Overview: Structure probing data (2A3 and DMS) for a 207-nucleotide construct. For DMS the reverse transcriptase was MarathonRT. 2A3 adducts were read by reverse transcription with SuperScript II with manganese. For DMS, 7,112 sequencing reads were counted. High 2A3 reactivity points to a flexible backbone, as in loops and unpaired stretches. For 2A3, 3,125 sequencing reads were counted. The RNA was probed in 150 mM KOAc, 10 mM MgCl2 and 150 mM bicine (pH 8.5) at 24 C. Values cover nucleotides 27 to 156.
RNA sequence: GGGAACGACUCGAGUAGAGUCGAAAAAAGGAUCAUUGGGUCGUAAUUAAGUUACAUUCAUGGCUAUUGCUUUUUGAAGGAUGAUUGGUAAAUGACAGGCUUCAUGUGCUUAGUACGGACAGUGUGCAGUAGGGUUUUUUCUGCCUCUGUCAGAAAAUCUCUGUAAUCAUUUCGAUGAUUACAGAGAAAAAGAAACAACAACAACAAC
Reactivity to 2A3 in 0.01 (KOAc 150mM, MgCl2 10mM, bicine 150mM(pH8.5), 24C), signal-to-noise 4, nucleotides 027 to 156: a000a000g080g010a050u070c030a040u060u050g010g000g030u060c020g020u020a060a040u120u100a100a050g050u060u080a050c030a070u040u120c030a040u060g040g000c020u050a080u120u120g030c010u080u080u050u080u140g060a080a020g040g020a030u070g020a040u070u090g040g010u090a060a080a050u090g030a030c040a060g040g000c000u040u040c040a020u070g020u010g030c020u040u040a040g020u040a070c040g040g010a000c010a010g010u020g030u100g050c000a000g030u100a050g040g040g000u050u110u010u000u060u060c010u010g000c000c000u030c020u020g010u000c000a000g010a000a090a010a010
Reactivity to DMS in 0.01 (KOAc 150mM, MgCl2 10mM, bicine 150mM(pH8.5), 24C), signal-to-noise 3, nucleotides 027 to 156: a080a070g020g000a100u000c030a100u000u000g030g020g050u000c110g010u000a050a070u000u010a040a110g020u000u000a040c050a070u010u010c050a050u010g040g020c020u000a050u010u000g000c040u010u000u010u000u000g010a110a110g020g020a110u010g010a090u020u010g010g020u000a040a080a110u010g010a140c060a060g020g020c020u010u000c030a040u010g020u000g000c020u000u000a080g030u020a110c070g000g010a010c020a020g010u010g010u010g040c000a030g010u000a100g020g020g010u000u000u000u000u000u000c030u000g000c020c010u000c030u000g010u000c020a040g010a070a070a080a120